An RNA of 207 nucleotides, treated with 2A3 and read out base by base. The reactions ran in a buffer of 150 mM KOAc, 10 mM MgCl2 and 150 mM bicine (pH 8.5), at 24 C. Reactivities are given for positions 27 through 156.
RNA sequence: GGGAACGACUCGAGUAGAGUCGAAAAGCCGCCAAUGAUCUCCUGCAUGAACGAGUUGGGCAGGAAGGUCUCGGCGGUGUUGCGCGCGGCGGCGUCCAUGGUGAUGAAGACGGGCUUGUUGAGGACGUAACACGAGCACGCGGUGGCGCCGCCGUGCGUACCGAAGCAGCUUCGGCUGCUUCGGUACAAAAGAAACAACAACAACAAC
Reactivity to 2A3 in 0.01 (KOAc 150mM, MgCl2 10mM, bicine 150mM(pH8.5), 24C), signal-to-noise 1, nucleotides 027 to 156: g010c000c000g000c010c010a050a120u230g000a010u000c000u020c000c000u000g030c020a070u090g130a300a110c110g030a200g160u130u090g010g070g000c010a010g000g000a010a070g000g000u000c010u010c080g000g000c010g000g000u020g000u000u120g030c010g000c000g000c000g000g000c000g000g000c000g010u110c020c010a060u110g090g080u160g070a220u140g030a100a040g030a060c040g030g000g010c000u060u030g030u040u090g080a100g040g050a070c070g030u050a100a000c040a000c080g000a010g000c020a000c040g060c020g060g040u050g010g000c020g020c060c000g010c000c000g000u010g000c010